Structure probing data (2A3) for a 207-nucleotide construct. 2A3 adducts were read by reverse transcription with SuperScript II with manganese. Conditions: 150 mM KOAc, 10 mM MgCl2 and 150 mM bicine (pH 8.5), 24 C. It was measured as part of the RMDB library RNAMAK. Reactivities are rounded to 0.1 and cut off at 0 and 3. The 2A3 profile rests on 1,377 reads.

[RMDB]
RNA sequence: GGGAACGACUCGAGUAGAGUCGAAAAUCCUAAGUCAGGCCGCCCUUCUUGGAUUUAUGGAGGGAGCGUCGGAAACGACGCGUUGAUCUCCAUUGUCAGAAGUAACAAGCCUGAUAUGGAAAAUCUGUUUCUAGGAACUUCGGUUCCUAGAAACAGACUGUGUUAAGCAGUUCGCUGCUUAACACAGAAAAGAAACAACAACAACAAC
Reactivity to 2A3 in 0.01 (KOAc 150mM, MgCl2 10mM, bicine 150mM(pH8.5), 24C), signal-to-noise 2, nucleotides 027 to 156: u030c000c000u020a100a010g030u010c000a000g000g000c010c000g030c040c070c000u000u030c010u060u260g180g020a110u250u300u160a010u080g020g000a000g000g010g000a010g000c000g000u010c000g050g000a090a090a050c030g000a000c010g000c000g060u100u000g010a000u000c000u010c010c010a000u000u010g000u000c000a000g000a040a030g000u110a100a150c070a080a050g000c010c020u000g000a000u010a040u020g050g070a010a090a050a090u040c000u000g010u000u000u000c000u000a020g000g000a000a000c000u010u070c300g090g000u000u000c000c000u000a000g000a000a000a000c000a000g000a000